[RMDB]
RNA sequence: GGGAACGACUCGAGUAGAGUCGAAAACAUGAAUCCAUAAUGAUAAAGUGCUAUUGAAUGAUCAAGUAAUUUGUAAGGUUUUUAUUAUCUUCGCAAGAGUUGUAUUGUUAAUUUAGACCUAGACAUGUGACAGGACUAACUUCGGUUAGUCCUGUCAAAAAGAAACAACAACAACAAC
Reactivity to DMS in 0.01 (KOAc 150mM, MgCl2 10mM, bicine 150mM(pH8.5), 24C), signal-to-noise 1, nucleotides 027 to 126: c000a120u000g000a210a060u020c010c080a120u020a040a040u010g000a000u000a070a100a000g000u000g020c070u000a060u000u010g000a100a130u010g000a170u000c060a000a040g000u050a070a070u040u000u000g000u040a030a010g000g040u000u000u040u000u000a000u000u000a040u000c040u000u090c200g040c050a040a020g000a160g000u000u010g030u130a220u000u000g000u000u000a000a000u050u000u010a020g040a050c020c020u000a070g000a060c020a080u000g000
This 177-nucleotide RNA was probed chemically with DMS.
DMS (dimethyl sulfate) methylates the pairing face of unpaired adenines and cytosines.
The data come from the RNA Mapping Database (RMDB), library RFM100.